The record gives the reactivity of an RNA of 207 nucleotides to DMS and 2A3. For 2A3, 1,068 sequencing reads were counted. For 2A3 the reverse transcriptase was SuperScript II with manganese. The DMS profile rests on 2,725 reads. The RNA was probed in 150 mM KOAc, 10 mM MgCl2 and 150 mM bicine (pH 8.5) at 24 C. Source: RMDB library OK3TST, as collected in RNAgym. For DMS the reverse transcriptase was MarathonRT.
RNA sequence: GGGAACGACUCGAGUAGAGUCGAAAAUUCACGUCCUAAGCAUGACCUUGGAACCAUAGACUGCAGCUCCCAGAUGAUUCUCAUUCAGGGUCUAGUCUCUGACCACUCACUGCUUCCUCAGCCGACUCAUAAAUCCUGUAGUCUGGCCGGGCGCAGUAAUAUACCCUGGGUUCGCCCAGGGUAUAUUAAAAGAAACAACAACAACAAC
Reactivity to DMS in 0.01 (KOAc 150mM, MgCl2 10mM, bicine 150mM(pH8.5), 24C), signal-to-noise 2, nucleotides 027 to 156: u000u020c070a090c090g020u010c020c020u010a120a130g000c030a140u010g020a030c000c020u020u010g000g030a060a050c050c030a080u000a100g010a140c030u010g000c020a140g030c030u000c010c000c000a090g000a100u000g010a050u010u010c070u000c090a160u000u000c060a060g010g000g040u030c000u000a160g010u010c000u000c020u010g020a050c040c020a090c080u000c010a100c040u010g000c000u000u000c040c020u010c040a070g010c000c000g000a040c010u020c040a080u000a060a050a090u000c050c160u000g030u010a110g000u000c020u000g080g010c010c050g000g010g040c300g010c030a080g010u000
Reactivity to 2A3 in 0.01 (KOAc 150mM, MgCl2 10mM, bicine 150mM(pH8.5), 24C), signal-to-noise 2, nucleotides 027 to 156: u160u060c060a050c080g070u030c020c000u030a090a030g060c030a060u090g030a110c000c050u050u050g030g020a000a060c050c000a030u050a100g020a030c010u060g050c060a070g050c030u030c000c010c020a000g010a030u030g020a020u170u050c090u030c080a100u230u110c040a050g010g000g020u000c030u030a030g020u020c010u000c020u080g060a150c010c010a040c070u060c010a010c000u010g000c000u080u050c020c000u050c030a000g000c000c010g030a020c010u000c030a030u110a240a200a060u140c050c060u080g040u120a030g010u020c160u230g010g000c000c030g010g000g000c010g000c000a010g010u030